[RMDB]
RNA sequence: GGGAACGACUCGAGUAGAGUCGAAAACUCGUCCUGGAUUACGUCUUGGUCGCAUCCCCGGCAGUAUUAAUGUGCCUUGGGGGAGUAUGGUUGAAAAUGGUAACCUGAAAUCACCACAAGCACUGGAGUAUAGUUCCUACUUCGGUAGGAACUAUACAAAAGAAACAACAACAACAAC
Reactivity to 2A3 in 0.01 (KOAc 150mM, MgCl2 10mM, bicine 150mM(pH8.5), 24C), signal-to-noise 3, nucleotides 027 to 126: c020u020c020g060u000c020c000u070g040g010a050u070u160a080c100g040u020c000u020u020g030g010u060c010g000c080a090u050c020c010c010c000g000g010c010a030g060u120a060u200u200a250a100u160g030u040g080c020c000u030u070g050g000g000g020g000a000g000u020a030u100g030g000u020u070g130a070a080a130a210u200g090g040u060a010a020c000c000u010g040a130a140a000u060c050a080c100c000a030c010a020a020g030c030a030c080u030g020g010a070
Reactivity to DMS in 0.01 (KOAc 150mM, MgCl2 10mM, bicine 150mM(pH8.5), 24C), signal-to-noise 3, nucleotides 027 to 126: c070u000c030g010u000c030c000u000g020g000a060u000u020a090c130g010u010c020u000u000g010g000u010c030g000c120a140u000c020c000c000c050g000g000c060a070g010u010a150u010u010a090a110u010g000u000g000c050c040u000u010g030g000g010g000g010a040g000u020a080u000g000g030u000u000g010a070a050a090a090u010g010g010u000a070a030c030c010u000g000a060a110a110u000c050a080c010c030a060c090a050a070g000c090a060c040u000g010g010a300
Overview:
The record gives the reactivity of an RNA of 177 nucleotides to 2A3 and DMS. It was measured as part of the RMDB library OK2TRN. In probing experiments dimethyl sulfate is read out at A N1 and C N3, which are open when not base-paired. The reactions ran in a buffer of 150 mM KOAc, 10 mM MgCl2 and 150 mM bicine (pH 8.5), at 24 C. For DMS, 3,473 sequencing reads were counted.